[RMDB]
RNA sequence: GGGAACGACUCGAGUAGAGUCGAAAAAGACCCGGUGCUGUAUCAGACCAACAAGGUGAUGAUCGAGAAGCUCCAGACGUACUUGCUGGAAGCGCACGCUCGCAACCCGCACUACUAUGCGAUGAUAGUGAUGGACCGCAACUGGCGGCCGCCGGCCAAACAUCAAGACAUUCGUGUCUUGAUGUUUAAAAGAAACAACAACAACAAC
Reactivity to 2A3 in 0.01 (KOAc 150mM, MgCl2 10mM, bicine 150mM(pH8.5), 24C), signal-to-noise 4, nucleotides 027 to 156: a010g050a020c000c000c010g010g020u060g020c040u040g000u100a070u090c020a020g030a070c040c010a040a170c060a140a140g010g000u070g040a140u040g010a040u100c050g000a020g020a140a010g010c000u010c000c000a040g040a130c050g070u240a160c090u100u300g020c000u010g010g050a210a140g010c040g000c030a020c100g030c010u010c000g030c010a030a120c010c000c020g020c020a030c020u110a040c010u080a120u140g070c050g080a070u050g040a060u070a030g010u020g050a090u100g010g020a060c000c000g020c030a070a090c100u070g090g000c000g000g000c000c000g030c010c010g000g020c010c000
Reactivity to DMS in 0.01 (KOAc 150mM, MgCl2 10mM, bicine 150mM(pH8.5), 24C), signal-to-noise 2, nucleotides 027 to 156: a130g020a240c020c000c010g030g070u000g000c010u000g040u010a090u010c050a060g000a120c040c030a070a130c090a090a070g000g030u020g010a090u010g000a070u010c020g000a100g000a160a300g030c010u000c020c020a040g020a100c080g010u010a110c070u000u020g050c020u000g000g010a090a130g040c030g020c060a090c040g050c040u000c030g000c060a130a090c040c020c020g020c030a020c040u000a040c030u000a070u000g020c050g010a160u000g030a060u000a050g000u020g020a070u000g020g000a090c000c020g020c010a100a140c070u000g030g020c000g030g030c020c010g030c040c020g020g000c030c100